[RMDB]
RNA sequence: GGGAACGACUCGAGUAGAGUCGAAAAGAUAUGGAGGCAGGACAUGAAGAGUAAUCGGAAACGAUUACCUUCAACAGCCUGCUCCUAAGUCAAAAGAUUAAGGAUGUCUUCGGACAUCCUUAAUCAAGUUAACUUAGGUCUUCGGACCUAAGUUAACAAAAGAAACAACAACAACAAC
Reactivity to 2A3 in 0.01 (KOAc 150mM, MgCl2 10mM, bicine 150mM(pH8.5), 24C), signal-to-noise 2, nucleotides 027 to 126: g020a000u060a060u160g000g000a040g140g220c010a010g010g030a050c060a190u090g020a020a000g200a020g020u010a000a000u010c020g040g050a050a050a040c020g000a000u010u000a000c000c000u010u000c010a020a020c030a030g060c010c000u000g010c000u010c010c000u010a080a020g030u060c020a000a050a170a110g010a000u000u000a000a010g030g010a000u020g000u020c020u080u160c300g030g000a000c000a000u010c000c010u000u000a000a000u000c000a010a000
Reactivity to DMS in 0.01 (KOAc 150mM, MgCl2 10mM, bicine 150mM(pH8.5), 24C), signal-to-noise 4, nucleotides 027 to 126: g000a050u010a300u000g000g010a040g020g000c010a010g020g010a050c100a230u000g000a010a000g020a180g020u000a010a000u000c000g010g000a050a110a160c000g000a020u000u000a010c000c010u000u000c010a020a060c220a150g000c000c000u000g010c000u000c000c000u000a040a200g010u000c020a100a080a110a120g020a010u010u000a000a000g000g000a000u000g010u000c000u000u000c210g020g010a020c010a000u000c000c010u000u000a000a000u000c010a070a080